[RMDB]
RNA sequence: GGGAACGACUCGAGUAGAGUCGAAAAGAGAAGAGAAGGGAGGGACAAUCAAACUUCAUUUGGACAUUUAGAAUAAAUCCCAUUAAGAUGUGGCCAGCUAUACCUCAAUUAUUGCUAAUAGAAGUAAGACUAGAACUAGUUUCGACUAGUUCUAGUCAAAAGAAACAACAACAACAAC
Reactivity to 2A3 in 0.01 (KOAc 150mM, MgCl2 10mM, bicine 150mM(pH8.5), 24C), signal-to-noise 3, nucleotides 027 to 126: g040a000g000a090a030g040a000g030a000a080g030g030g020a040g010g040g040a040c070a030a070u070c030a060a070a020c010u050u010c020a090u100u080u050g020g000a010c000a060u070u070u090a060g050a080a040u110a100a030a030u040c010c010c000a010u070u060a070a020g030a040u100g020u070g060g020c000c010a010g000c010u040a070u030a130c010c030u050c070a030a010u120u080a090u090u170g040c010u040a070a120u070a250g070a070a000g000u030a040a100
Reactivity to DMS in 0.01 (KOAc 150mM, MgCl2 10mM, bicine 150mM(pH8.5), 24C), signal-to-noise 3, nucleotides 027 to 126: g020a160g000a090a060g010a080g010a070a040g000g010g010a150g010g010g010a080c110a100a110u010c100a040a140a120c060u000u000c030a150u000u020u000g010g020a090c070a030u000u000u020a090g010a110a080u010a020a070a100u010c000c000c000a100u000u020a050a080g000a040u000g010u000g010g000c020c030a040g000c060u020a060u000a050c060c020u010c060a020a050u000u000a090u000u010g000c090u000a070a050u010a100g010a050a070g010u000a060a080
Structure probing data (2A3 and DMS) for a 177-nucleotide construct. 2A3 adducts were read by reverse transcription with SuperScript II with manganese. The 2A3 profile rests on 1,956 reads. The reactions ran in a buffer of 150 mM KOAc, 10 mM MgCl2 and 150 mM bicine (pH 8.5), at 24 C. Values cover nucleotides 27 to 126.